Chemical mapping of a 207-nucleotide RNA with 2A3 and DMS. The reactions ran in a buffer of 150 mM KOAc, 10 mM MgCl2 and 150 mM bicine (pH 8.5), at 24 C. 2A3 adducts were read by reverse transcription with SuperScript II with manganese.
RNA sequence: GGGAACGACUCGAGUAGAGUCGAAAAAGCACUGGUACGAUACGUCGUACCAGUGCAGUCGUUGGGAUGGAACGCAAUUAAAUACAUGUGUGACGUGUAUUUGGGAACGACGUAAUUAUUUUUCAAAAUCACGCUAUCGUGUUCGCACGAUAGCGAACACUAAAUGGACCUUCGGGUCCAUUUAGUGAAAAGAAACAACAACAACAAC
Reactivity to 2A3 in 0.01 (KOAc 150mM, MgCl2 10mM, bicine 150mM(pH8.5), 24C), signal-to-noise 2, nucleotides 027 to 156: a000g010c000a010c000u000g000g000u000a000c010g000a000u020a070c260g100u010c000g000u000a020c010c000a010g010u000g000c000a000g000u000c000g040u050u070g090g020g050a190u060g050g030a170a040c090g000c070a050a090u100u080a020a030a070u030a000c010a070u040g050u060g090u100g270a080c030g000u000g000u000a020u010u050u060g070g010g000a070a060c020g020a000c010g010u060a110a020u150u170a110u110u140u010u040u080c120a030a030a000a060u090c080a030c100g000c020u000a020u010c020g000u000g000u030u040c080g010c110a010c090g000a000u000a000g000c000g000a000a000
Reactivity to DMS in 0.01 (KOAc 150mM, MgCl2 10mM, bicine 150mM(pH8.5), 24C), signal-to-noise 2, nucleotides 027 to 156: a090g000c000a000c000u000g010g020u000a010c030g020a070u000a100c280g060u000c010g060u040a040c000c010a020g000u000g010c040a030g010u000c010g000u000u000g000g000g050a150u000g010g010a090a060c070g020c070a090a130u010u000a010a030a000u000a010c020a010u000g020u010g030u010g040a090c060g060u000g000u000a020u000u000u000g000g010g020a120a110c020g020a110c000g010u000a070a090u010u000a220u000u000u020u000u000c050a040a010a080a110u010c140a080c010g040c010u000a020u000c010g000u000g020u000u000c300g040c020a050c080g000a030u000a040g010c000g010a020a030